This 177-nucleotide RNA was probed chemically with 2A3 and DMS.
It was measured as part of the RMDB libraries RFM100 and RFMREP.
Conditions: 150 mM KOAc, 10 mM MgCl2 and 150 mM bicine (pH 8.5), 24 C.

[RMDB]
RNA sequence: GGGAACGACUCGAGUAGAGUCGAAAAAAGGCCAAUCAAACUGAGAGAUAGCUCGUACUCCCCGAAAUGCAUUUAGGUGCAGCGUUGUGGUUGAGUUUUAUAGAGGUAGAGCUACUGAUAGGAUGCGCCCUGGUACACUUUUCGAAGUGUACCAGGGAAAAGAAACAACAACAACAAC
Reactivity to 2A3 in 0.01 (KOAc 150mM, MgCl2 10mM, bicine 150mM(pH8.5), 24C), signal-to-noise 2, nucleotides 027 to 126: a000a000g040g070c070c000a100a070u130c060a030a010a150c080u090g060a040g010a000g050a190u000a030g010c010u010c010g060u160a010c040u100c040c070c000c000g050a010a030a090u040g040c040a030u050u080u150a190g140g000u020g000c010a000g010c070g040u030u050g040u140g040g000u100u130g040a060g020u100u080u030u040a080u060a130g150a050g070g010u110a040g040a020g030c000u000a000c010u020g020a040u050a020g040g000a050u130g020c000g010
Reactivity to DMS in 0.01 (KOAc 150mM, MgCl2 10mM, bicine 150mM(pH8.5), 24C), signal-to-noise 2, nucleotides 027 to 126: a030a060g000g000c000c020a090a080u040c110a040a140a180c110u020g000a180g010a060g010a120u010a040g010c000u010c030g030u020a250c090u020c010c010c000c110g020a020a040a130u020g000c020a000u010u010u070a070g030g000u000g010c000a030g000c060g010u000u010g000u020g020g000u000u000g010a140g020u000u030u040u000a140u020a060g010a130g020g010u040a080g020a000g030c020u000a040c060u000g010a080u030a060g050g000a130u030g010c140g020